[RMDB]
RNA sequence: GGGAACGACUCGAGUAGAGUCGAAAAGACGGCCAUCACCUGUUCUUCUGUGAGGAUGCGAAACGUGGAAUACCACACUCGCUGAAGAAAACAAACUAGCAAAGACCCAGCGAGCAAUGGAAAGGGGCAAAAUUAAUCCAUUCGUGGAUUAAUUUUGAAAAGAAACAACAACAACAAC
Reactivity to 2A3 in 0.01 (KOAc 150mM, MgCl2 10mM, bicine 150mM(pH8.5), 24C), signal-to-noise 9, nucleotides 027 to 126: g060a020c020g010g010c000c000a040u020c010a020c020c000u020g030u050u020c010u030u000c010u010g060u030g030a050g070g020a060u140g100c090g070a080a100a040c080g010u020g010g060a170a110u140a290c020c000a000c000a010c010u000c000g000c000u020g010a030a020g030a040a080a020a010c060a020a060a020c040u100a030g060c030a090a060a000g010a030c020c000c010a000g020c020g030a020g020c020a040a070u090g020g030a070a050a030g010g000g000g000
Reactivity to DMS in 0.01 (KOAc 150mM, MgCl2 10mM, bicine 150mM(pH8.5), 24C), signal-to-noise 9, nucleotides 027 to 126: g010a080c050g010g000c010c020a040u010c040a070c060c020u010g010u010u000c020u000u010c020u010g010u010g010a050g000g010a110u030g010c090g010a030a080a100c150g020u010g000g000a210a150u030a120c020c010a040c050a220c020u000c010g000c000u000g000a060a060g010a050a050a070a100c160a060a060a110c120u020a070g020c100a060a050a080g000a130c080c020c000a040g000c010g010a050g010c090a090a090u010g000g000a030a050a050g000g000g000g010
This 177-nucleotide RNA was probed chemically with 2A3 and DMS. The RNA was probed in 150 mM KOAc, 10 mM MgCl2 and 150 mM bicine (pH 8.5) at 24 C.